RNA sequence: GGGAACGACUCGAGUAGAGUCGAAAAUCGUCAUUCAAUGAGUGUCAUCCGUCUAUUGUUGGCAAUCUCAUUGAACUUCAUAACAAUCACAACCCCGAUAACAUCCCAUCUCUUCCAUAUUAUGUUGAGUAUGCUGGUCCUGGUUGGAAGGCUGGUCGGAGGAAUAAUCUUUCGAGAUUAUUCCUCCAAAAGAAACAACAACAACAAC
Reactivity to DMS in 0.01 (KOAc 150mM, MgCl2 10mM, bicine 150mM(pH8.5), 24C), signal-to-noise 2, nucleotides 027 to 156: u010c030g000u000c140a050u000u000c010a030a020u020g010a040g090u000g000u010c040a010u000c070c190g010u010c140u010a140u000u000g020u030u010g030g020c000a050a100u020c010u010c000a020u010u010g000a020a030c050u000u010c030a060u000a100a110c060a050a120u000c080a050c050a080a130c050c020c000c100g010a140u010a060a090c070a160u000c020c010c000a150u000c030u010c030u000u000c030c030a100u000a090u000u000a060u000g010u010u000g010a070g010u000a150u000g020c040u000g030g030u010c060c020u030g030g000u010u000g000g010a120a050g030g030c020u010g040g000u010c090
Reactivity to 2A3 in 0.01 (KOAc 150mM, MgCl2 10mM, bicine 150mM(pH8.5), 24C), signal-to-noise 5, nucleotides 027 to 156: u090c030g070u050c020a060u020u010c000a020a000u010g000a000g010u020g030u020c020a030u090c110c050g160u040c170u260a250u170u250g040u010u000g000g000c000a040a160u050c010u000c020a010u000u000g000a010a030c010u050u020c020a060u090a230a050c060a090a140u140c070a040c040a100a120c020c000c000c000g020a020u030a100a040c020a080u040c010c010c000a060u040c030u000c020u090u010c040c020a050u040a100u300u130a090u180g060u040u040g030a020g030u110a050u090g020c030u060g020g040u060c020c030u020g040g020u050u020g030g020a050a030g030g000c020u030g020g030u100c050

Chemical mapping of a 207-nucleotide RNA with DMS and 2A3. For DMS the reverse transcriptase was MarathonRT.